The data come from the RNA Mapping Database (RMDB), library OK1LIB. Structure probing data (2A3 and DMS) for a 177-nucleotide construct. The RNA was probed in 150 mM KOAc, 10 mM MgCl2 and 150 mM bicine (pH 8.5) at 24 C.

RNA sequence: GGGAACGACUCGAGUAGAGUCGAAAAGUCCGACGAGGAUGCGCGGCGUCGUCUGGAGAAGACCUUCGAUAGCGGUGACCCGGAAUUGCUGCGGCACUUCAAGGAGCUUGCCGCCGACCGGCUGGAGCCCGGAAUGGAACUUCGGUUCCAUUCCGGGAAAAGAAACAACAACAACAAC
Reactivity to 2A3 in 0.01 (KOAc 150mM, MgCl2 10mM, bicine 150mM(pH8.5), 24C), signal-to-noise 2, nucleotides 027 to 126: g050u050c030c000g010a050c070g020a010g010g050a100u070g000c030g030c060g050g000c000g050u020c000g020u050c000u140g030g000a020g040a140a020g070a030c030c000u150u100c030g130a110u100a110g100c040g030g030u020g030a040c000c010c090g050g000a070a090u120u140g040c030u040g000c000g100g000c010a020c000u070u060c040a130a230g060g000a070g020c110u090u050g000c020c000g020c000c000g000a000c000c010g050g000c030u050g040g020a020g040
Reactivity to DMS in 0.01 (KOAc 150mM, MgCl2 10mM, bicine 150mM(pH8.5), 24C), signal-to-noise 1, nucleotides 027 to 126: g040u060c000c000g000a030c150g000a180g030g040a070u000g060c000g060c040g000g090c010g070u000c000g000u010c000u030g000g000a170g060a060a080g010a110c000c060u090u050c070g000a050u020a170g070c040g000g000u000g000a060c080c020c000g000g000a110a080u020u000g040c190u000g000c030g000g070c000a090c050u000u010c030a060a140g010g000a060g000c220u000u000g000c000c020g010c000c120g000a070c080c000g010g010c090u000g000g000a300g030
Description:
For 2A3 the reverse transcriptase was SuperScript II with manganese.